[RMDB]
Structure probing data (2A3) for a 207-nucleotide construct.
For 2A3 the reverse transcriptase was SuperScript II with manganese.
The 2A3 profile rests on 2,675 reads.
Values cover nucleotides 27 to 156.
The reactions ran in a buffer of 150 mM KOAc, 10 mM MgCl2 and 150 mM bicine (pH 8.5), at 24 C.

RNA sequence: GGGAACGACUCGAGUAGAGUCGAAAAGGGGUCCAGAGGGAGGGACCCAUAGAGCGAGGAUCAUACUGAAGCCUCCACGGUAUGGGAGCUCUAUAGGGUCCCAUCGAUCUCUGGACGGAGGCACCCAAAGAACUAAUCGAUUCGUCGAUUAGUUCAACUAAUUCUUACACUUCGGUGUAAGAAUUAGAAAAGAAACAACAACAACAAC
Reactivity to 2A3 in 0.01 (KOAc 150mM, MgCl2 10mM, bicine 150mM(pH8.5), 24C), signal-to-noise 2, nucleotides 027 to 156: g040g010g040g020u020c000c000a000g000a000g020g000g010a000g010g000g000a000c000c000c000a000u000a000g000a000g000c020g020a230g050g000a000u000c000a000u010a010c010u020g040a120a020g000c020c000u000c000c000a000c010g010g000u060a000u010g000g000g020a010g230c000u000c010u210a000u220a010g000g010g000u030c030c000c000a010u070c000g000a000u000c000u000c000u000g000g010a000c020g010g000a010g000g000c010a020c000c010c010a070a130a030g010a000a000c000u000a000a000u000c000g000a020u050u130c230g100u030c010g100a000u000u000a000g000u010u000c000a000a000